[RMDB]
About this RNA:
Chemical mapping of a 177-nucleotide RNA with DMS and 2A3. For 2A3, 3,482 sequencing reads were counted. The reactions ran in a buffer of 150 mM KOAc, 10 mM MgCl2 and 150 mM bicine (pH 8.5), at 24 C. For DMS, 2,989 sequencing reads were counted. 2A3 adducts were read by reverse transcription with SuperScript II with manganese. Reactivities are given for positions 27 through 126. Source: RMDB library OK2TRN, as collected in RNAgym.

RNA sequence: GGGAACGACUCGAGUAGAGUCGAAAACGUACGAUCCGUCGAUCACGAUCAGUCUAGGAGGAUCCGCUAGGCGUACACAUCGCGACGGAUCCUAGGUCAUGAGAUAGCUAGAUCGUCUAGGCAGUACACAUUGGACGAUCUUCGGAUCGUCCAAUGUAAAAGAAACAACAACAACAAC
Reactivity to DMS in 0.01 (KOAc 150mM, MgCl2 10mM, bicine 150mM(pH8.5), 24C), signal-to-noise 4, nucleotides 027 to 126: c120g020u010a040c080g000a030u010c020c010g020u010c060g000a050u000c160a110c000g000a040u000c050a130g000u000c020u010a050g010g010a080g020g010a050u000c010c050g000c060u000a070g010g010c000g050u010a080c280a160c260a050u010c010g030c000g000a030c000g000g000a010u000c000c020u000a050g020g000u000c070a090u010g010a070g010a120u010a060g030c080u000a100g000a040u000c040g010u010c040u000a040g000g030c120a120g020u010a050c180
Reactivity to 2A3 in 0.01 (KOAc 150mM, MgCl2 10mM, bicine 150mM(pH8.5), 24C), signal-to-noise 3, nucleotides 027 to 126: c060g050u070a010c020g030a060u040c030c010g000u020c020g010a040u050c050a020c080g030a010u020c020a050g080u000c020u010a030g030g110a020g030g020a100u000c000c000g040c070u110a060g120g090c010g000u100a040c150a010c010a180u140c020g020c000g080a060c010g000g010a020u000c000c000u010a010g030g030u060c020a100u140g030a000g030a150u090a060g070c070u070a060g000a040u030c020g040u040c020u040a040g020g090c030a030g030u060a030c070